[RMDB]
About this RNA:
An RNA of 207 nucleotides, treated with 2A3 and DMS and read out base by base. Reactivities are given for positions 27 through 156. Source: RMDB library OK3TST, as collected in RNAgym.
RNA sequence: GGGAACGACUCGAGUAGAGUCGAAAAAAACGGUACAAGACGUUAUUAUCAAAACACGUGUUACAGUAAAUUUAGUAGACCCAUUAGCACAAUCAUUCCAAUAUGAUGAAAGUAGAACUAUUAGUUCUUUAGGUUUAUACUUUGCUAGUAAAGGAGGGUGAUACUUCGGAUUCGUCCGAAGUAUCACAAAAGAAACAACAACAACAAC
Reactivity to 2A3 in 0.01 (KOAc 150mM, MgCl2 10mM, bicine 150mM(pH8.5), 24C), signal-to-noise 3, nucleotides 027 to 156: a000a000a000c110g000g010u170a080c060a080a020g070a020c040g030u020u000a080u210u050a110u120c060a040a100a040a040c090a010c050g050u080g050u110u070a000c010a050g030u050a000a170a060u040u090u060a060g030u010a010g050a050c000c010c020a020u100u090a030g050c030a000c040a090a050u080c010a050u100u070c050c060a070a090u080a030u190g090a000u020g000a020a020a000g020u020a000g010a020a000c010u020a080u290u070a090g050u090u090c010u020u090u080a030g000g000u010u070u060a240u010a050c010u080u040u010g050c000u020a000g030u060a060a080a030g110g000a020g070g050
Reactivity to DMS in 0.01 (KOAc 150mM, MgCl2 10mM, bicine 150mM(pH8.5), 24C), signal-to-noise 1, nucleotides 027 to 156: a060a080a040c060g020g040u000a080c060a070a080g050a150c040g000u010u000a030u000u000a060u010c010a050a020a050a050c060a080c060g000u010g000u000u020a010c010a300g000u000a050a080a080u000u000u000a050g040u000a040g040a090c030c010c080a150u010u000a020g020c010a080c060a060a070u000c020a050u000u000c030c190a030a190u010a030u000g000a040u020g030a040a050a080g040u000a040g020a020a040c000u000a140u010u020a090g010u000u010c040u010u000u000a050g000g000u000u000u000a060u010a050c030u000u000u000g040c000u000a190g030u000a020a090a210g050g000a120g000g020